[RMDB]
RNA sequence: GGGAACGACUCGAGUAGAGUCGAAAAUGAGAUAGCUAAAUCACCUCGGUAUGAUUAGGGUGAGACCUAGGAACCGUAGGGGUAUUCUCAAAGGAAGCUUUUGCAGAGACGCCCAUGUAAGUGGGAUAAGAACCAACCCACUUCGGUGGGUUGGUAAUCUACUUUUGUGAUUCGUCACAAAAGUAGAAAAAGAAACAACAACAACAAC
Reactivity to DMS in 0.01 (KOAc 150mM, MgCl2 10mM, bicine 150mM(pH8.5), 24C), signal-to-noise 2, nucleotides 027 to 156: u000g010a090g010a140u000a090g020c020u000a070a060a100u000c010a050c000c000u000c030g050g000u000a150u000g000a180u000u000a050g030g000g010u000g020a170g000a110c020c010u000a110g010g010a120a110c030c010g010u000a050g010g060g010g000u000a070u000u000c000u000c030a070a080a220g010g010a150a120g020c010u000u000u010u010g020c010a080g000a160g010a060c080g000c000c000c000a040u000g000u000a090a140g030u000g000g000g020a080u000a070a100g000a090a080c000c020a020a030c000c000c000a020c000u000u000c250g070g080u000g010g000g010u010u000g010g030u000a030a010
Reactivity to 2A3 in 0.01 (KOAc 150mM, MgCl2 10mM, bicine 150mM(pH8.5), 24C), signal-to-noise 3, nucleotides 027 to 156: u160g010a030g020a080u060a040g040c060u120a030a110a160u100c050a080c050c010u010c030g040g020u300a170u260g070a090u040u020a010g010g020g000u040g090a060g020a080c000c000u010a020g010g070a040a010c010c010g010u080a040g000g000g020g000u010a070u090u030c040u000c030a050a060a020g070g040a040a020g020c010u060u100u110u150g010c070a010g010a020g020a150c090g050c000c020c010a010u040g060u120a070a150g040u020g020g020g000a040u120a090a060g050a020a010c000c000a000a000c000c000c010a020c000u030u010c050g090g000u000g030g000g000u000u000g000g000u000a000a000